[RMDB]
RNA sequence: GGGAACGACUCGAGUAGAGUCGAAAACUAAAAGGUGAAGGUGGAUCUGGGGGCAGGUAAUCUGCUUGCCCGGCAGCUGAUGUUGCUUGGGAAUAAACUACGCCAGUGGACUGUCAGAGGCUUGGGGCGCGUUGAGCAAAUUCGUUUGCUCAACGCGAAAAGAAACAACAACAACAAC
Reactivity to DMS in 0.01 (KOAc 150mM, MgCl2 10mM, bicine 150mM(pH8.5), 24C), signal-to-noise 1, nucleotides 027 to 126: c040u020a090a040a130a110g000g010u000g000a070a130g040g010u000g000g000a070u010c060u020g000g020g040g000g040c010a040g010g000u010a080a050u040c050u000g020c010u020u000g000c040c000c000g000g010c070a010g000c070u020g000a090u020g060u000u000g000c020u000u020g040g000g000a140a090u000a030a070a070c110u000a070c120g000c020c020a090g000u000g020g000a090c030u000g010u000c100a070g000a060g020g000c070u000u010g010g000g010g040